[RMDB]
RNA sequence: GGGAACGACUCGAGUAGAGUCGAAAAGCAAACGGGCACUGGCUUCAGGAGAGGAUGUUCCAUGGCCGUAAGCGCAGGCACACCACAGUGCCUGCUAUCACGGCAUUAUCGCCAGCGGUGCUGCCGUUGCAAAAGCGUCUUUCGAGACGCUUUUGCAAAAAGAAACAACAACAACAAC
Reactivity to 2A3 in 0.01 (KOAc 150mM, MgCl2 10mM, bicine 150mM(pH8.5), 24C), signal-to-noise 2, nucleotides 027 to 126: g080c010a020a020a020c000g000g000g000c030a000c040u030g150g000c000u040u090c150a070g020g040a090g010a040g060g010a090u120g090u170u070c050c020a070u130g070g000c000c000g010u030a040a010g060c000g000c070a000g000g030c000a000c000a000c010c110a130c100a080g010u000g000c000c000u020g000c000u000a020u070c080a000c000g040g000c000a000u000u150a040u000c020g020c000c000a000g000c010g030g000u000g000c010u120g130c020c030g000u010
Reactivity to DMS in 0.01 (KOAc 150mM, MgCl2 10mM, bicine 150mM(pH8.5), 24C), signal-to-noise 1, nucleotides 027 to 126: g020c060a020a010a030c000g040g010g000c000a010c010u000g010g000c000u000u040c190a070g000g000a080g010a110g030g000a160u000g020u000u000c070c020a070u040g000g020c000c000g000u010a040a020g020c300g010c000a030g010g010c060a020c000a150c230c130a160c150a060g000u000g000c000c000u000g000c000u010a000u000c070a000c000g020g000c000a100u000u030a020u000c000g010c000c010a150g000c010g000g000u000g010c050u000g020c010c000g000u000